This 177-nucleotide RNA was probed chemically with DMS and 2A3.
RNA sequence: GGGAACGACUCGAGUAGAGUCGAAAAACCGAGGCCGGCCACCGGUUGCUCGGCGACAUGGCAGCGGCCACCGACAUGCCCGGGCGAUUUGUGGUGGCUGCGGCGAUGGUGCGCCACCUGCUCACCGCCAACAGUGGGAAUUCGUUCCCACUGUUGGAAAAGAAACAACAACAACAAC
Reactivity to DMS in 0.01 (KOAc 150mM, MgCl2 10mM, bicine 150mM(pH8.5), 24C), signal-to-noise 1, nucleotides 027 to 126: a110c040c000g030a080g030g000c030c020g000g000c030c040a040c070c050g020g000u000u000g030c040u010c030g020g020c040g000a150c020a030u000g000g020c020a100g020c060g030g010c050c060a050c000c020g000a090c060a040u000g000c000c030c080g010g020g020c000g000a040u000u000u000g030u020g000g040u010g000g000c000u000g000c040g010g030c000g000a050u010g010g000u000g010c060g000c010c070a140c120c060u000g000c020u010c020a060c010c040g050
Reactivity to 2A3 in 0.01 (KOAc 150mM, MgCl2 10mM, bicine 150mM(pH8.5), 24C), signal-to-noise 2, nucleotides 027 to 126: a000c030c000g010a110g080g020c020c030g040g020c110c030a030c070c020g040g010u030u080g050c020u040c040g070g000c070g010a030c000a040u070g070g000c070a020g030c100g030g050c040c030a030c040c010g050a050c030a030u060g000c000c020c080g110g040g030c000g040a040u010u070u170g120u100g010g000u000g010g000c000u040g000c020g000g000c030g020a060u140g050g070u050g050c010g030c030c010a070c030c020u000g010c020u000c020a050c010c010g020

The reactions ran in a buffer of 150 mM KOAc, 10 mM MgCl2 and 150 mM bicine (pH 8.5), at 24 C. The DMS profile rests on 1,691 reads. 2A3 adducts were read by reverse transcription with SuperScript II with manganese.